Background: The record gives the reactivity of an RNA of 177 nucleotides to DMS and 2A3. For 2A3, 15,107 sequencing reads were counted. For DMS the reverse transcriptase was MarathonRT. The reactions ran in a buffer of 150 mM KOAc, 10 mM MgCl2 and 150 mM bicine (pH 8.5), at 24 C. Source: RMDB library M2PK90, as collected in RNAgym.
RNA sequence: GGGAACGACUCGAGUAGAGUCGAAAACAAUUGAGCGUCGCACACACACAGACUAAGUCUGACACUGACAGAGCCUAAACCGCUCUGUCAGUGUGCGAGAUAUCCUUCUUAAUGUGAGCAGAGGAAAGAAGACUUCUUAAUUCGUUAAGAAGUCUUCAAAAGAAACAACAACAACAAC
Reactivity to DMS in 0.01 (KOAc 150mM, MgCl2 10mM, bicine 150mM(pH8.5), 24C), signal-to-noise 9, nucleotides 027 to 126: c050a090a100u010u010g010a070g020c090g020u000c030g020c040a070c070a070c080a070c150a130c070a020g010a020c060u010a100a150g010u010c010u000g000a070c040a020c030u000g000a020c000a010g000a000g000c000c010u010a030a070a140c300c300g000c000u000c000u000g010u000c000a000g000u000g010u000g000c070g000a030g000a070u010a080u000c080c020u000u000c030u000u000a100a120u000g010u000g000a110g020c070a080g010a040g000g010a060a070a120
Reactivity to 2A3 in 0.01 (KOAc 150mM, MgCl2 10mM, bicine 150mM(pH8.5), 24C), signal-to-noise 7, nucleotides 027 to 126: c020a030a150u100u210g050a060g070c080g110u030c020g010c010a020c000a000c010a000c000a000c000a060g010a020c040u210a280a040g010u000c010u010g040a020c000a000c040u000g010a000c010a010g000a000g000c000c000u050a060a050a040c010c000g000c000u000c000u010g000u000c000a000g000u000g000u000g000c010g000a010g000a000u100a030u060c020c020u070u080c020u050u180a170a110u160g050u060g100a020g020c050a030g030a030g050g050a080a060a040